[RMDB]
RNA sequence: GGGAACGACUCGAGUAGAGUCGAAAAUGGACUUUUUACAGUUCCUACUUAUCCGGUUUUAACGCUAUUUUAUUGGCGCAAAGGUUUACGGAUAAACAACUAAUAAUUAAACCUUUUGUGUGCGAAAAUUGGACGUUUAGGUUCGCCUAAACGUCAAACAUCAGUACGUGUUCGCACGUACUGAUGUAAAAGAAACAACAACAACAAC
Reactivity to DMS in 0.01 (KOAc 150mM, MgCl2 10mM, bicine 150mM(pH8.5), 24C), signal-to-noise 1, nucleotides 027 to 156: u000g000g010a160c040u010u000u010u000u030a090c180a090g000u000u010c000c040u000a050c070u000u010a000u000c000c000g040g000u000u010u010u000a190a000c010g030c000u000a030u000u000u040u030a170u040u000g060g000c010g000c030a010a030a060g040g000u000u010u020a220c030g010g000a020u000a010a080a230c010a060a130c100u010a170a100u000a080a170u000u010a000a010a010c020c010u000u000u000u030g020u000g010u000g080c000g000a080a050a090a210u000u010g010g020a040c000g090u000u000u010a020g000g050u010u010c300g010c010c000u000a000a020a010c000g000u010c020a010a050
Reactivity to 2A3 in 0.01 (KOAc 150mM, MgCl2 10mM, bicine 150mM(pH8.5), 24C), signal-to-noise 2, nucleotides 027 to 156: u130g040g020a070c030u120u130u090u110u160a120c160a050g010u080u080c010c000u030a080c030u020u030a010u010c000c000g020g000u020u000u010u040a050a040c010g000c040u010a120u030u220u100u050a160u210u190g000g000c000g020c030a020a010a070g010g010u000u000u000a000c020g010g000a000u020a020a070a060c020a000a010c040u170a010a140u130a200a050u120u160a030a020a000c010c000u070u060u020u090g080u010g010u060g050c080g070a030a040a040a090u090u090g090g000a000c000g000u010u000u000a000g020g020u020u040c180g120c010c000u010a000a000a000c000g010u000c000a000a000

Structure probing data (DMS and 2A3) for a 207-nucleotide construct.
2A3 adducts were read by reverse transcription with SuperScript II with manganese.
The DMS profile rests on 1,736 reads.
The reactions ran in a buffer of 150 mM KOAc, 10 mM MgCl2 and 150 mM bicine (pH 8.5), at 24 C.